[RMDB]
RNA sequence: GGGAACGACUCGAGUAGAGUCGAAAAAUCUGGCAGAAAUUACUGUGCAAAGUGUCUGUAAUCUUGAUGUAUGGUUAGUGAAGUACUGCCAACUGAACUAAUGGAAAUGCUUCUUACUUUGAGAUCCCUUUCCCUCCUAGUUCGCUAGGAGGGAAAGAAAAGAAACAACAACAACAAC
Reactivity to 2A3 in 0.01 (KOAc 150mM, MgCl2 10mM, bicine 150mM(pH8.5), 24C), signal-to-noise 2, nucleotides 027 to 126: a000u020c060u070g020g000c040a010g020a020a120a010u060u060a020c020u050g000u040g040c030a090a120a240g120u110g060u090c030u110g090u070a030a060u040c030u050u100g040a030u040g080u130a060u040g150g000u040u020a020g030u050g020a030a030g020u050a030c030u050g000c030c010a000a030c040u030g030a030a000c010u050a050a050u090g090g080a120a110a010u140g050c000u090u000c020u040u040a070c020u090u030u070g040a040g000a010u040c020c030
Reactivity to DMS in 0.01 (KOAc 150mM, MgCl2 10mM, bicine 150mM(pH8.5), 24C), signal-to-noise 2, nucleotides 027 to 126: a030u000c070u000g000g000c000a050g010a110a050a040u000u010a040c020u000g020u020g010c100a080a130a100g040u000g010u010c050u010g050u010a050a040u000c030u020u000g030a080u000g020u000a050u010g000g010u000u000a040g010u000g000a180a020g000u000a090c050u000g000c020c010a080a030c050u000g030a180a030c040u010a030a030u020g020g020a090a050a080u010g010c050u000u010c030u000u010a090c100u000u010u010g000a100g010a150u000c070c040

Chemical mapping of a 177-nucleotide RNA with 2A3 and DMS.
The RNA was probed in 150 mM KOAc, 10 mM MgCl2 and 150 mM bicine (pH 8.5) at 24 C.
The data come from the RNA Mapping Database (RMDB), library OK2TRN.